[RMDB]
RNA sequence: GGGAACGACUCGAGUAGAGUCGAAAAUCUAGACCUGGAGAUUCUCUCUAUUGCUUUGCAUUAGGCAGUGUAGCUAGACAAGGUCUUGCUGAGUCUGGCGUGCAAUAGUGUGGUCACAGCUCACUGCAGUGUCAACCUCCUGAGCCCAAGCCAUCCACAUGGUUUUAAUAUUCGUAUUAAAACCAUGAAAAGAAACAACAACAACAAC
Reactivity to DMS in 0.01 (KOAc 150mM, MgCl2 10mM, bicine 150mM(pH8.5), 24C), signal-to-noise 4, nucleotides 027 to 156: u000c030u000a070g010a060c010c010u000g010g010a140g020a100u000u000c020u000c010u000c020u000a030u000u000g010c030u000u000u000g010c040a140u000u010a080g030g010c070a090g040u000g030u010a100g030c020u000a040g000a050c040a060a300g010g000u000c100u010u010g010c010u010g010a300g010u000c030u000g020g020c000g010u000g000c020a040a070u000a040g030u000g040u000g020g040u000c030a100c090a070g010c040u000c030a080c030u000g020c030a090g010u010g020u000c020a070a090c040c010u000c020c020u010g020a120g000c000c000c020a070a150g010c030c010a130u010c010c030a220
Reactivity to 2A3 in 0.01 (KOAc 150mM, MgCl2 10mM, bicine 150mM(pH8.5), 24C), signal-to-noise 6, nucleotides 027 to 156: u050c020u020a030g040a050c010c020u020g050g000a060g020a100u190u030c050u010c000u000c010u050a040u030u050g010c020u120u060u160g010c030a100u100u150a070g090g000c030a030g030u030g050u170a020g010c020u030a010g010a020c060a120a070g110g000u040c050u060u140g010c010u020g010a020g030u010c000u030g020g040c030g010u030g000c010a010a040u030a070g060u060g020u050g050g030u040c020a010c030a040g030c010u020c020a050c040u060g010c030a020g010u020g050u120c050a050a060c010c010u000c000c010u040g030a020g000c000c010c000a020a020g020c020c020a040u050c020c030a030
The record gives the reactivity of an RNA of 207 nucleotides to DMS and 2A3. Values cover nucleotides 27 to 156. For DMS the reverse transcriptase was MarathonRT.